Chemical mapping of a 177-nucleotide RNA with DMS and 2A3.
The 2A3 profile rests on 1,977 reads.
For DMS the reverse transcriptase was MarathonRT.
The RNA was probed in 150 mM KOAc, 10 mM MgCl2 and 150 mM bicine (pH 8.5) at 24 C.
RNA sequence: GGGAACGACUCGAGUAGAGUCGAAAAGAUAUGGAUGCAUGGAUGGACGACCAUCGGAAACGAUGGCGGUUGAAGUCUUUGCAUCCUAAGUCAAAGGGAGAGCUAGGGUUCGCCCUAGCUCUCCCAAGUGCAUUUAUACCUUCGGGUAUAAAUGCACAAAAGAAACAACAACAACAAC
Reactivity to DMS in 0.01 (KOAc 150mM, MgCl2 10mM, bicine 150mM(pH8.5), 24C), signal-to-noise 2, nucleotides 027 to 126: g000a000u000a120u000g000g000a030u000g010c000a010u010g020g010a030u000g000g010a080c020g010a090c000c000a010u010c000g000g010a040a030a100c000g030a010u000g000g000c010g010g000u000u020g000a120a170g010u000c000u000u000u000g000c000a020u000c000c000u000a000a070g000u000c020a090a170a180g010g040g010a010g020a020g010c000u010a000g000g000g000u010u020c250g020c010c010c000u010a000g000c000u000c000u000c010c010c000a000a020
Reactivity to 2A3 in 0.01 (KOAc 150mM, MgCl2 10mM, bicine 150mM(pH8.5), 24C), signal-to-noise 1, nucleotides 027 to 126: g040a010u020a030u050g000g010a020u000g000c010a010u020g020g080a030u180g300g060a000c020g170a280c000c000a000u010c030g020g020a000a040a010c000g000a000u020g030g000c010g020g020u040u170g240a300a130g000u000c000u000u000u000g000c010a000u010c000c010u010a000a000g010u040c020a080a090a170g010g000g000a000g000a010g000c000u000a030g060g010g000u130u160c250g100c000c000c020u020a000g000c000u000c000u000c000c000c000a010a000